[RMDB]
RNA sequence: GGGAACGACUCGAGUAGAGUCGAAAAAGGAGUAAUCCUAAACAGGGUUUUCACCCUUCCUUUAGUUUCCUUCCUCUCCUGGAGAGGUCUUCUGCCCUAGCCCGGUCUUCGAAGCUUCCUUUGGCUACAUUCAAGUAAUGUUCGCAUUACUUGAAUGAAAAGAAACAACAACAACAAC
Reactivity to 2A3 in 0.01 (KOAc 150mM, MgCl2 10mM, bicine 150mM(pH8.5), 24C), signal-to-noise 2, nucleotides 027 to 126: a000g020g000a020g010u050a040a030u060c010c010u040a020a010a050c300a040g030g010g020u090u150u300u300c150a050c000c010c000u020u020c000c000u010u020u020a020g010u000u030u030c010c000u030u070c000c010u010c020u010c020c120u110g010g070a050g000a020g020g020u000c000u070u010c030u040g030c000c000c010u020a020g010c000c020c030g040g050u030c040u080u060c090g060a070a040g010c020u040u050c010c000u060u100u110g060g000c010u030a020
Reactivity to DMS in 0.01 (KOAc 150mM, MgCl2 10mM, bicine 150mM(pH8.5), 24C), signal-to-noise 7, nucleotides 027 to 126: a020g010g010a030g010u000a040a040u000c130c010u000a030a040a060c220a020g000g000g010u010u010u010u010c210a080c010c010c000u000u000c040c020u000u000u000a040g010u000u010u000c010c010u000u000c020c010u000c030u000c010c100u010g010g000a060g010a050g000g010u000c020u000u010c040u000g010c020c020c020u000a090g010c030c020c140g000g010u000c080u000u000c070g010a090a120g010c090u000u000c030c020u000u010u010g010g010c050u000a140
Chemical mapping of a 177-nucleotide RNA with 2A3 and DMS. For 2A3, 11,554 sequencing reads were counted. The data come from the RNA Mapping Database (RMDB), library VIROID. Conditions: 150 mM KOAc, 10 mM MgCl2 and 150 mM bicine (pH 8.5), 24 C. For DMS the reverse transcriptase was MarathonRT.